[RMDB]
RNA sequence: GGGAACGACUCGAGUAGAGUCGAAAAGGCGGCACAUUGAGACGGGAGACGGGGGUAGAAAUGCGGUCGGCAUCAACCAUUGGUUCCUUCCCUCUUUUCUUUUCUGUCCUUCCUCUUUUAUUUAUGAGAAGUUGAGUUUAUUCGUAAACUCAACUUCAAAAGAAACAACAACAACAAC
Reactivity to 2A3 in 0.01 (KOAc 150mM, MgCl2 10mM, bicine 150mM(pH8.5), 24C), signal-to-noise 2, nucleotides 027 to 126: g010g030c010g020g050c020a020c020a100u050u150g040a040g020a060c070g010g020g000a060g000a010c040g010g000g020g000g000u030a030g050a070a100a030u110g040c010g000g110u070c030g030g000c000a000u030c010a010a070c060c040a050u030u080g060g000u040u050c010c000u010u040c010c020c000u040c000u020u090u020u050c000u000u070u010u020c020u030g040u040c020c000u040u050c010c020u070c050u150u110u070u060a160u070u240u080a140u130g030a070
Reactivity to DMS in 0.01 (KOAc 150mM, MgCl2 10mM, bicine 150mM(pH8.5), 24C), signal-to-noise 3, nucleotides 027 to 126: g010g010c070g000g000c070a080c100a080u000u010g010a100g020a090c100g010g000g010a090g000a080c140g000g000g010g000g020u000a050g000a060a030a040u010g010c280g010g010u000c110g000g000c070a050u000c100a050a100c080c060a160u000u000g020g010u000u000c030c020u000u000c030c020c020u010c050u000u000u000u000c020u000u010u000u000c050u010g000u000c040c030u000u000c020c010u000c080u000u000u010u010a060u000u030u000a070u020g010a300

An RNA of 177 nucleotides, treated with 2A3 and DMS and read out base by base. For 2A3 the reverse transcriptase was SuperScript II with manganese. Values cover nucleotides 27 to 126. For DMS the reverse transcriptase was MarathonRT.